[RMDB]
RNA sequence: GGGAACGACUCGAGUAGAGUCGAAAAGAUAUGGAACUAUGGCCUUGGAUUUACAUCUGCACAGAUUACACUUCGGAAACGAAGUGUAAUCUAGCAGAUGUUGUCAGGCUAAAUAGUUCCUAAGUCACUGUGUUUUAAUGUUCGCAUUAAAACACAGAAAAGAAACAACAACAACAAC
Reactivity to 2A3 in 0.01 (KOAc 150mM, MgCl2 10mM, bicine 150mM(pH8.5), 24C), signal-to-noise 3, nucleotides 027 to 126: g040a020u090a050u180g000g000a000a000c000u010a010u030g030g040c010c060u100u300g280g020a080u300u300u140a010c000a000u000c000u010g020c050a230c050a300g000a000u000u000a000c010a000c010u000u010c000g020g080a090a180a050c000g020a010a020g000u000g010u010a000a000u000c000u000a010g030c010a000g010a000u000g000u000u000g010u020c010a010g020g000c010u010a000a000a000u010a000g000u000u000c010c000u020a180a010g090u050c020a030
Reactivity to DMS in 0.01 (KOAc 150mM, MgCl2 10mM, bicine 150mM(pH8.5), 24C), signal-to-noise 3, nucleotides 027 to 126: g010a040u010a300u010g000g000a010a020c000u010a010u000g010g010c000c010u010u000g030g010a040u010u010u010a000c000a000u000c000u020g020c010a190c300a030g000a030u000u000a000c000a020c000u000u000c000g000g010a160a100a240c020g010a000a000g000u000g000u000a000a000u000c000u000a060g010c000a000g010a010u000g000u000u000g000u010c000a030g010g010c000u000a030a090a060u000a010g000u000u000c000c000u000a030a080g010u010c040a250

The record gives the reactivity of an RNA of 177 nucleotides to 2A3 and DMS.
It was measured as part of the RMDB library TTRINS.
The DMS profile rests on 4,275 reads.